[RMDB]
RNA sequence: GGGAACGACUCGAGUAGAGUCGAAAACAGUUCCAUGGUGAGACCUUCCUGGACAUGUGACAGUGACAUGGACAUGUCUAGUGACACUGACAUGGACAUGUCAAGUGACACGCGGGCAUGACAAAGCCUGUUAUAGCUAUUUCGAUAGCUAUAACAGAAAAGAAACAACAACAACAAC
Reactivity to 2A3 in 0.01 (KOAc 150mM, MgCl2 10mM, bicine 150mM(pH8.5), 24C), signal-to-noise 9, nucleotides 027 to 126: c030a020g040u060u020c020c010a040u110g050g020u090g060a100g040a060c010c020u030u040c010c010u060g030g050a050c030a090u150g030u030g050a030c020a070g080u010g050a000c000a020u010g010g000a010c000a000u010g000u000c020u040a030g020u060g120a060c050a020c190u030g000a000c000a010u020g010g040a020c010a000u000g000u010c000a000a010g030u010g020a020c010a000c040g040c070g010g000g000c050a050u080g020a050c040a040a100a010g050c000
Reactivity to DMS in 0.01 (KOAc 150mM, MgCl2 10mM, bicine 150mM(pH8.5), 24C), signal-to-noise 9, nucleotides 027 to 126: c170a160g000u000u000c020c010a080u010g010g010u010g010a110g010a120c050c040u000u000c030c010u000g010g010a090c070a080u000g010u000g010a100c030a080g010u000g000a030c020a020u000g000g000a050c000a000u000g010u000c000u010a060g020u000g010a160c190a300c050u000g000a020c000a000u000g000g010a040c040a010u000g000u000c000a040a030g010u000g010a140c040a030c040g010c090g000g000g000c040a040u000g010a070c130a100a100a150g010c140